[RMDB]
The record gives the reactivity of an RNA of 177 nucleotides to DMS and 2A3.
Conditions: 150 mM KOAc, 10 mM MgCl2 and 150 mM bicine (pH 8.5), 24 C.
Reactivities are given for positions 27 through 126.
The data come from the RNA Mapping Database (RMDB), library OK2TRN.
RNA sequence: GGGAACGACUCGAGUAGAGUCGAAAAUUGGAUGUCACUGUUGAUUUGUUUGUGCUUAUUGGUAUUCCUACAGAUUGCUUAUAAUUUGUUUGUGAUCAUAGAGAAACUAAGAGUCAUCUCGUGCGACUGUAUACUGAUUUUUCGAAAUCAGUAUACAAAAAGAAACAACAACAACAAC
Reactivity to DMS in 0.01 (KOAc 150mM, MgCl2 10mM, bicine 150mM(pH8.5), 24C), signal-to-noise 9, nucleotides 027 to 126: u010u010g020g010a090u000g010u000c050a090c080u000g000u000u000g010a100u000u000u000g010u000u000u000g020u010g000c030u000u000a090u000u000g010g020u000a120u000u000c010c010u000a050c130a090g010a030u000u000g010c090u000u000a050u010a090a120u000u000u010g010u000u000u000g020u000g010a030u000c020a220u000a060g000a110g010a050a050a050c040u000a050a080g010a080g000u000c040a070u000c040u010c080g010u000g010c100g010a070c150
Reactivity to 2A3 in 0.01 (KOAc 150mM, MgCl2 10mM, bicine 150mM(pH8.5), 24C), signal-to-noise 5, nucleotides 027 to 126: u080u060g060g020a030u080g040u090c020a030c090u020g060u150u050g060a160u050u030u070g090u070u090u090g050u050g010c010u050u100a100u140u150g010g010u060a260u120u040c000c000u000a030c020a030g020a060u010u030g000c030u140u090a070u050a250a230u220u160u140g050u020u060u040g030u040g010a020u030c020a020u050a040g050a000g020a060a040a020c020u040a110a010g020a000g080u030c020a040u030c040u010c060g020u050g030c030g050a050c080